RNA sequence: GGGAACGACUCGAGUAGAGUCGAAAAGAUAUGGAUGUGUACCUUCGAAGAACUCGGAAACGAGGGAGAAGAGUACAACAUCCUAAGUCAAAACGUAUUCAUUGGGGUUCGCCCCAAUGAAUACGAACUUAUAAACAGACUUCGGUCUGUUUAUAAGAAAAGAAACAACAACAACAAC
Reactivity to DMS in 0.01 (KOAc 150mM, MgCl2 10mM, bicine 150mM(pH8.5), 24C), signal-to-noise 5, nucleotides 027 to 126: g000a050u010a300u010g000g000a020u000g020u000g010u000a000c000c000u000u000c000g000a120a130g010a130a210c000u000c010g000g000a150a080a200c000g010a020g000g000g000a070g010a020a020g000a130g010u000a000c000a050a050c000a000u000c000c000u000a030a100g000u000c050a090a050a120a210c010g000u000a000u000u000c000a010u000u000g000g000g000g010u000u020c300g010c000c000c000c000a000a000u000g000a000a000u000a000c010g010a030a050
Reactivity to 2A3 in 0.01 (KOAc 150mM, MgCl2 10mM, bicine 150mM(pH8.5), 24C), signal-to-noise 4, nucleotides 027 to 126: g030a020u090a040u160g000g000a010u010g010u000g000u000a000c000c020u010u010c050g220a300a060g000a070a030c000u000c000g020g000a070a080a050c010g000a020g000g030g000a030g000a010a000g070a080g010u000a000c020a020a040c000a000u000c000c000u010a120a030g050u030c050a010a040a110a110c010g000u000a000u000u010c000a000u010u000g000g030g030g020u060u080c260g140c010c000c000c000a000a000u010g000a010a000u000a000c000g000a000a000